RNA sequence: GGGAACGACUCGAGUAGAGUCGAAAAUAUUGGCGCACUCUCGGCAUGGCGGCUUACUUCAAGGAUGUCCUCAAGGAUGAUGAAAGCUUUGCACAAGUGGAGCUGCCAGCCUUUGCGCCUCAGCAGCCAGACAAUUGCAGUUCGCUGCAAUUGUCUGAAAAGAAACAACAACAACAAC
Reactivity to DMS in 0.01 (KOAc 150mM, MgCl2 10mM, bicine 150mM(pH8.5), 24C), signal-to-noise 3, nucleotides 027 to 126: u010a130u000u010g020g000c010g020c000a040c300u010c110u010c160g000g010c020a060u000g020g000c010g010g010c000u000u000a050c020u000u010c010a050a060g000g010a070u010g000u000c010c000u020c170a160a170g020g000a110u000g000a140u010g000a040a080a090g010c010u000u000u000g020c300a090c210a080a010g020u000g000g020a010g010c010u000g000c010c010a040g010c000c010u010u010u000g010c000g010c000c000u000c150a020g000c100a120g020c090
Reactivity to 2A3 in 0.01 (KOAc 150mM, MgCl2 10mM, bicine 150mM(pH8.5), 24C), signal-to-noise 1, nucleotides 027 to 126: u160a020u010u070g000g000c000g000c000a020c030u100c010u060c050g000g000c250a280u030g030g000c000g000g020c010u020u020a030c000u030u000c010a040a010g030g010a110u100g030u020c020c020u040c050a100a120g210g020a130u090g020a040u120g080a080a080a050g020c000u030u050u050g100c110a110c010a140a030g000u020g000g060a010g000c010u000g000c040c000a010g010c000c000u020u040u020g000c000g010c000c000u000c000a000g070c010a010g070c000
The record gives the reactivity of an RNA of 177 nucleotides to DMS and 2A3. The 2A3 profile rests on 1,890 reads. For 2A3 the reverse transcriptase was SuperScript II with manganese. The reactions ran in a buffer of 150 mM KOAc, 10 mM MgCl2 and 150 mM bicine (pH 8.5), at 24 C. For DMS the reverse transcriptase was MarathonRT. Reactivities are given for positions 27 through 126. Source: RMDB library OK2TST, as collected in RNAgym.